[RMDB]
RNA sequence: GGGAACGACUCGAGUAGAGUCGAAAAGGCAGAGUCCUAUCAAAUCCAGAAGCCUCAGAUACCCUUGGAAUGAUGAUGGUGCUGCUGCUGCUGAUGAUGAUUUCAUGGGAAGGCAUUUGAACAUUUUAGGCAAAAGAGUAAAAUGAUGUGAUUAAACCUUAGAAUGUUAGUUCGCUAACAUUCUAAGAAAAGAAACAACAACAACAAC
Reactivity to DMS in 0.01 (KOAc 150mM, MgCl2 10mM, bicine 150mM(pH8.5), 24C), signal-to-noise 3, nucleotides 027 to 156: g010g030c040a100g010a180g000u010c040c030u100a090u000c040a070a100a080u000c010c010a120g010a190a280g020c030c030u010c040a090g010a130u000a160c000c000c020u000u000g000g000a100a130u000g020a160u020g000a110u010g000g020u000g010c010u000g010c020u010g000c000u000g030c030u000g010a090u000g020a090u010g020a120u000u000u000c030a120u000g010g010g030a070a050g020g010c000a100u010u000u020g030a090a110c020a070u000u010u000u000a090g020g030c060a060a080a080a150g010a130g000u010a000a040a020a060u000g030a070u000g040u000g000a120u000u000a040a090a120c110
Reactivity to 2A3 in 0.01 (KOAc 150mM, MgCl2 10mM, bicine 150mM(pH8.5), 24C), signal-to-noise 6, nucleotides 027 to 156: g050g000c040a030g030a030g120u070c010c000u010a050u060c040a030a100a040u030c020c010a020g040a100a030g040c020c010u050c040a040g060a160u150a150c030c000c000u040u060g040g040a150a090u090g070a050u040g010a020u050g060g020u020g020c010u020g010c020u010g000c010u010g010c030u040g020a060u030g000a010u020g010a030u020u100u050c070a060u090g030g000g030a020a050g040g000c020a030u070u040u090g020a030a010c010a030u060u080u070u090a040g030g000c020a040a030a050a020g050a040g040u090a040a040a050a040u100g060a040u080g030u020g040a020u070u160a060a060a030c000